[RMDB]
RNA sequence: GGGAACGACUCGAGUAGAGUCGAAAAGAUAUGGAGGGUUGAAGGACAUGGCGUGUCGGAAACGACACCCAACAGCCUUAACCCUCCUAAGUCAAAAGGCAAUCCCUUCUUCGGAAGGGAUUGCCAAUCCAUGAUUGACGUUCGCGUCAAUCAUGGAAAAAGAAACAACAACAACAAC
Reactivity to DMS in 0.01 (KOAc 150mM, MgCl2 10mM, bicine 150mM(pH8.5), 24C), signal-to-noise 1, nucleotides 027 to 126: g010a010u000a190u000g010g000a000g000g010g000u000u010g010a010a030g060g060a210c040a080u000g010g010c300g100u000g010u000c010g000g000a030a000a090c000g060a010c000a000c080c000c020a040a110c250a110g000c010c020u000u000a000a000c010c000c000u020c000c010u010a000a040g000u010c010a070a090a070a040g010g020c000a020a000u000c000c030c000u010u000c000u000u020c270g000g030a020a010g000g010g020a000u010u000g010c000c000a010a000
This 177-nucleotide RNA was probed chemically with DMS.
The RNA was probed in 150 mM KOAc, 10 mM MgCl2 and 150 mM bicine (pH 8.5) at 24 C.
Reactivities are rounded to 0.1 and cut off at 0 and 3.
DMS adducts were read by reverse transcription with MarathonRT.
For DMS, 950 sequencing reads were counted.
Values cover nucleotides 27 to 126.